[RMDB]
This 207-nucleotide RNA was probed chemically with 2A3. The data come from the RNA Mapping Database (RMDB), library ARCHII. Reactivities are given for positions 27 through 156. The reactions ran in a buffer of 150 mM KOAc, 10 mM MgCl2 and 150 mM bicine (pH 8.5), at 24 C.
RNA sequence: GGGAACGACUCGAGUAGAGUCGAAAACGGGUGGGGUUCACAGACUAGAUGACGGCAGGCUCGUGCGCAUUGCGUGCACGGGGCUCAAGAUAUAGUCGGUCCGCCCAAGGCAAGAUCGCUUCUCUCCAAGGGAACUCGCCCGCAAGUGUAUUCACCGCCCAUAUGAAGGGUUCGCCCUUCAUAUGGGAAAAGAAACAACAACAACAAC
Reactivity to 2A3 in 0.01 (KOAc 150mM, MgCl2 10mM, bicine 150mM(pH8.5), 24C), signal-to-noise 2, nucleotides 027 to 156: c020g000g030g010u120g010g050g020g120u090u080c070a090c040a120g000a000c020u070a020g020a110u050g080a130c030g040g000c130a000g100g070c000u000c000g050u010g000c000g000c020a120u160u300g110c190g000u000g000c000a000c010g000g000g000g030c010u010c010a000a030g030a040u120a000u010a110g000u020c020g000g000u010c010c030g000c000c000c000a000a000g000g000c080a070a070g000a100u180c080g000c220u250u040c060u010c000u020c100c000a070a080g050g000g000a040a050c010u000c040g020c020c020c020g000c030a070a040g040u060g000u090a250u060u090c000a060c050c050g020